[RMDB]
RNA sequence: GGGAACGACUCGAGUAGAGUCGAAAACUGCAUCACCUAAUCACUGAUGGCUCAACGGUAUCCGGCGGUACAACUGAAUACUUGUAGCUGCCUUUUGAGCGGGUUGGCUGCAAUCCGAAACGGAGAGAAAACCUAAUUACGUUCGCGUAAUUAGGAACCCUGAGAAGAUGUUCGCAUCUUCUCAGGGAAAAGAAACAACAACAACAAC
Reactivity to DMS in 0.01 (KOAc 150mM, MgCl2 10mM, bicine 150mM(pH8.5), 24C), signal-to-noise 1, nucleotides 027 to 156: c010u000g010c040a080u000c030a070c000c010u000a100a190u000c040a080c040u010g000a050u000g010g030c010u000c010a090a020c090g020g020u000a020u010c030c010g020g030c000g000g010u000a010c190a050a010c030u000g000a030a070u000a030c030u000u030g000u000a050g000c010u020g000c000c010u000u010u000u010g000a080g040c120g020g000g000u000u010g020g030c090u000g000c000a030a050u010c010c020g000a030a130a070c100g020g030a100g000a300g000a020a050a070a090c030c020u000a010a010u000u000a000c000g000u000u030c300g070c000g040u000a010a000u000u010a000g000g040a030a030
Reactivity to 2A3 in 0.01 (KOAc 150mM, MgCl2 10mM, bicine 150mM(pH8.5), 24C), signal-to-noise 3, nucleotides 027 to 156: c030u030g030c020a020u010c020a020c020c020u050a000a060u040c030a040c080u040g010a030u020g060g010c030u050c120a100a010c030g030g020u050a030u060c010c010g040g000c020g070g010u110a050c040a130a040c110u120g070a110a060u080a160c040u080u060g010u010a000g030c010u010g020c010c000u050u060u100u130g090a060g040c080g000g020g010u160u290g000g000c000u000g000c000a010a010u020c010c000g050a130a160a110c100g030g020a020g000a000g000a080a010a000a040c000c000u000a000a000u010u000a000c000g010u010u030c100g000c000g130u000a000a000u000u000a000g000g000a000a000

Chemical mapping of a 207-nucleotide RNA with DMS and 2A3. For DMS the reverse transcriptase was MarathonRT. The 2A3 profile rests on 2,172 reads. For 2A3 the reverse transcriptase was SuperScript II with manganese. Values cover nucleotides 27 to 156. It was measured as part of the RMDB library M2RFPK.